[RMDB]
Chemical mapping of a 177-nucleotide RNA with 2A3.
Conditions: 150 mM KOAc, 10 mM MgCl2 and 150 mM bicine (pH 8.5), 24 C.
Reactivities are given for positions 27 through 126.
RNA sequence: GGGAACGACUCGAGUAGAGUCGAAAAGCACGAUGCAGCGGUUGGAUGUUGCAAAGUUGUAGCCAGGUACAUUCCUGUUAAACACUAUUCCACACAUGUUUACUGCAUAUAACUGCAAUUGAACAGCGCGCCGAACUGAAUUCGUUCAGUUCGGCGCAAAAGAAACAACAACAACAAC
Reactivity to 2A3 in 0.01 (KOAc 150mM, MgCl2 10mM, bicine 150mM(pH8.5), 24C), signal-to-noise 1, nucleotides 027 to 126: g020c050a000c020g000a090u000g000c000a000g000c040g000g150u080u050g140g000a090u110g020u130u120g000c000a000a000a150g030u210u060g000u000a000g000c000c000a000g030g140u120a160c000a160u100u170c000c020u050g020u140u300a000a090a000c050a100c070u100a100u070u070c100c000a050c000a000c000a050u060g000u040u090u150a000c020u000g000c150a040u180a040u060a190a090c000u000g000c040a160a160u000u260g000a000a150c000a060g030c040